RNA sequence: GGGAACGACUCGAGUAGAGUCGAAAAGCACGUCCGGCAAGUCCCGUGCGAACACUUGAGCUCCGGGUUGGCCGCUCUUGUGGAUUAGGACGUUCUAGCUCCGGCUUGGCCGCUAGUUCGUCCGAAAACGUACCCUAGCUUUCGAGCUAGGGUACGUAAAAGAAACAACAACAACAAC
Reactivity to 2A3 in 0.01 (KOAc 150mM, MgCl2 10mM, bicine 150mM(pH8.5), 24C), signal-to-noise 2, nucleotides 027 to 126: g010c010a020c030g040u090c060c030g010g030c020a090a060g060u070c020c030c010g000u010g030c010g030a060a010c000a000c010u000u000g010a010g000c010u030c080c000g080g210g000u110u160g140g000c030c020g000c010u030c000u000u000g000u010g040g070a070u070u120a070g010g000a010c010g000u000u010c000u010a020g020c050u030c040c010g150g000c070u160u280g120g040c030c050g030c020u010a000g000u000u000c000g000u000c000c000g000a000a000a000
Reactivity to DMS in 0.01 (KOAc 150mM, MgCl2 10mM, bicine 150mM(pH8.5), 24C), signal-to-noise 2, nucleotides 027 to 126: g030c000a020c030g000u030c060c010g000g010c140a090a130g010u020c050c050c000g050u010g010c050g000a090a190c030a050c080u010u010g000a070g000c030u000c050c000g030g000g030u020u040g010g000c020c130g020c030u000c040u000u000g020u020g020g000a120u020u020a180g010g000a000c000g000u000u020c000u000a000g020c050u050c190c060g000g020c090u020u020g000g000c150c100g000c000u000a000g000u000u020c000g000u000c010c000g000a050a020a030